[RMDB]
RNA sequence: GGGAACGACUCGAGUAGAGUCGAAAAUUCGAGGAUCUCCUCCCUCUCCUUCGAGGACGGGUUCGCGACGGGUUGGCUCAUCCUGAGAUCGGGGAGCCUCGACGAUCUCUUUGAUCUCCUGAAGGAGCUAGACUAUCGAGUUCGCUCGAUAGUCUAGAAAAGAAACAACAACAACAAC
Reactivity to 2A3 in 0.01 (KOAc 150mM, MgCl2 10mM, bicine 150mM(pH8.5), 24C), signal-to-noise 1, nucleotides 027 to 126: u080u020c010g000a000g000g010a010u040c030u020c090c000u010c000c010c010u000c020u040c020c030u020u100c030g070a020g020g000a000c000g010g000g060u050u170c050g090c050g060a140c080g160g220g000u120u120g040g010c000u020c020a050u050c000c020u060g030a030g000a070u040c040g000g000g000g000a020g000c020c000u000c010g010a030c010g010a060u010c020u000c030u100u090u130g040a060u030c020u000c050c040u090g030a030a020g000g000a010g000
Reactivity to DMS in 0.01 (KOAc 150mM, MgCl2 10mM, bicine 150mM(pH8.5), 24C), signal-to-noise 1, nucleotides 027 to 126: u010u000c030g000a060g000g000a110u000c040u020c040c020u000c010c030c050u010c060u000c020c170u000u000c080g010a040g010g020a040c100g020g000g000u000u000c100g010c110g010a160c140g020g000g030u020u000g000g000c000u000c010a160u010c010c010u000g010a070g010a030u000c100g000g000g040g000a040g000c080c000u000c060g000a120c180g010a050u000c030u000c060u000u000u000g010a040u000c020u000c000c110u010g000a040a070g000g010a010g000
The data come from the RNA Mapping Database (RMDB), library 15KREP.
This 177-nucleotide RNA was probed chemically with 2A3 and DMS.
For DMS the reverse transcriptase was MarathonRT.
Conditions: 150 mM KOAc, 10 mM MgCl2 and 150 mM bicine (pH 8.5), 24 C.
For 2A3, 1,155 sequencing reads were counted.
Values cover nucleotides 27 to 126.